[RMDB]
RNA sequence: GGGAACGACUCGAGUAGAGUCGAAAACAUCGUGCUGGUACACGUACAGUGCGCAGGCCAUGCGAGGAUCGUACGCGGCGCGAUCCUAUGCGUACACUACAGUCGUGCUGCGCGUACUCGUACUGCGCGGCGACACGACGUUCGCGUCGUGUCGCCGAAAAGAAACAACAACAACAAC
Reactivity to 2A3 in 0.01 (KOAc 150mM, MgCl2 10mM, bicine 150mM(pH8.5), 24C), signal-to-noise 3, nucleotides 027 to 126: c020a070u100c080g020u040g060c050u150g050g080u170a090c020a020c020g070u170a030c020a070g090u090g070c010g000c000a000g060g020c040c090a080u120g020c040g020a050g040g010a060u280c010g020u100a050c040g010c020g080g050c000g000c000g010a010u000c020c020u160a200u170g070c090g060u090a060c120a010c160u150a050c020a100g040u080c010g020u010g050c020u030g000c020g000c000g000u000a020c000u020c010g000u010a030c010u020g000c030g000
Reactivity to DMS in 0.01 (KOAc 150mM, MgCl2 10mM, bicine 150mM(pH8.5), 24C), signal-to-noise 2, nucleotides 027 to 126: c120a140u010c070g020u000g030c030u010g010g010u010a100c000a050c050g010u010a150c130a070g040u000g020c010g000c030a000g000g040c110c170a120u000g030c040g000a000g000g000a110u010c060g010u010a070c080g060c010g000g000c000g010c010g000a010u000c000c070u000a050u010g010c050g000u000a040c130a060c130u000a090c210a120g000u030c010g010u000g010c000u010g010c000g000c010g010u000a070c040u000c080g020u000a070c020u000g000c040g010